[RMDB]
RNA sequence: GGGAACGACUCGAGUAGAGUCGAAAAAAAAGAUAUGGACCAGCUCCCCACCGUAACAGAUCUUGGACCUACGAUCGGAAACGAUCGUAGCUAGAUCUGAGUUACGAGGCUGGUCCUAAGUCAAAAACUAUAGGUAGGUCUUCGGACCUACCUAUAGAAAAGAAACAACAACAACAAC
Reactivity to DMS in 0.01 (KOAc 150mM, MgCl2 10mM, bicine 150mM(pH8.5), 24C), signal-to-noise 2, nucleotides 027 to 126: a040a070a110a070g000a100u010a210u000g000g010a010c000c020a000g000c010u010c210c020c000c070a300c090c000g030u000a000a030c020a020g000a000u000c010u000u000g010g040a140c300c010u000a000c000g000a020u000c010g010g010a220a090a160c000g020a010u000c000g010u000a000g010c040u000a020g000a000u000c000u000g010a140g040u000u000a030c000g000a090g030g000c010u000g000g000u000c000c000u010a010a080g000u010c100a020a130a100a160a080